[RMDB]
RNA sequence: GGGAACGACUCGAGUAGAGUCGAAAAUUAAAUAGCGUAAUCGACAUAGAGAAUGUACGCUAAGUGUGUGUUGUAUGGGCAACGUCCAAUUGAACACACACACAGUUGGACCUAAUGUCGAAAAAAACGUACUUAGGGGGUUCGCCCCCUAAGUACGAAAAGAAACAACAACAACAAC
Reactivity to DMS in 0.01 (KOAc 150mM, MgCl2 10mM, bicine 150mM(pH8.5), 24C), signal-to-noise 1, nucleotides 027 to 126: u010u020a070a020a190u000a030g010c000g010u020a050a140u000c010g010a010c010a020u030a130g010a100g000a260a100u000g030u000a020c000g000c000u000a130a150g020u000g000u000g000u000g020u030u010g020u000a090u000g020g000g020c000a060a120c300g000u000c040c000a000a100u020u000g020a060a000c000a060c000a000c010a000c000a030c060a030g050u000u000g000g000a230c020c000u000a070a030u000g000u000c000g050a010a010a110a080a040a110a100
Reactivity to 2A3 in 0.01 (KOAc 150mM, MgCl2 10mM, bicine 150mM(pH8.5), 24C), signal-to-noise 1, nucleotides 027 to 126: u250u070a020a000a090u120a040g010c040g000u020a000a090u020c000g020a000c000a020u100a030g070a000g050a210a130u220g010u100a010c000g000c030u010a140a140g010u010g000u000g040u020g000u080u000g070u060a100u050g040g000g000c090a220a170c220g120u110c010c000a040a040u040u110g060a060a010c010a010c010a010c010a000c000a000c010a070g130u170u130g040g050a010c000c000u050a040a030u020g000u000c020g100a100a020a020a000a000a000a000